Overview
Chemical mapping of a 177-nucleotide RNA with DMS and 2A3. Source: RMDB libraries RFM100 and RFMREP, as collected in RNAgym. The reactions ran in a buffer of 150 mM KOAc, 10 mM MgCl2 and 150 mM bicine (pH 8.5), at 24 C. For DMS the reverse transcriptase was MarathonRT. As a SHAPE reagent, 2A3 marks flexible, mostly unpaired nucleotides at the ribose 2'-OH. Reactivities are rounded to 0.1 and cut off at 0 and 3.

[RMDB]
RNA sequence: GGGAACGACUCGAGUAGAGUCGAAAAAGCAGCGUACGCGCUGCAGAUCAAUGAUGAAACUAGCCAAAUCUGAGCAUCAGAAGGCUUUCCGGUCUACCUGAUGCAUGAUCUCUACAGUUCUGAGAAACAAGUAAGUCACUUUCGAGUGACUUACUUGAAAAGAAACAACAACAACAAC
Reactivity to DMS in 0.01 (KOAc 150mM, MgCl2 10mM, bicine 150mM(pH8.5), 24C), signal-to-noise 5, nucleotides 027 to 126: a110g000c010a020g020c010g030u020a100c210g030c010g020c000u000g000c000a010g010a080u010c060a120a130u030g010a040u010g000a090a080a080c070u000a110g010c110c130a060a110a040u000c000u000g010a110g010c020a000u010c000a010g000a110a030g000g010c010u000u020u030c230c160g010g000u000c000u020a140c150c010u000g010a000u000g000c000a150u010g000a020u010c020u000c040u010a050c150a090g030u000u000c030u010g000a120g010a130a090a140
Reactivity to 2A3 in 0.01 (KOAc 150mM, MgCl2 10mM, bicine 150mM(pH8.5), 24C), signal-to-noise 7, nucleotides 027 to 126: a000g000c010a000g000c010g040u060a040c190g030c000g000c130u010g000c010a000g010a020u110c060a040a100u130g060a030u060g070a070a020a100c080u080a050g100c050c030a090a090a040u040c030u120g050a040g030c000a000u010c000a000g020a040a010g000g000c000u070u100u090c050c080g020g000u000c010u050a140c020c000u000g010a000u010g000c010a010u010g010a000u000c000u020c010u040a060c050a100g020u070u010c030u090g060a030g080a080a140a020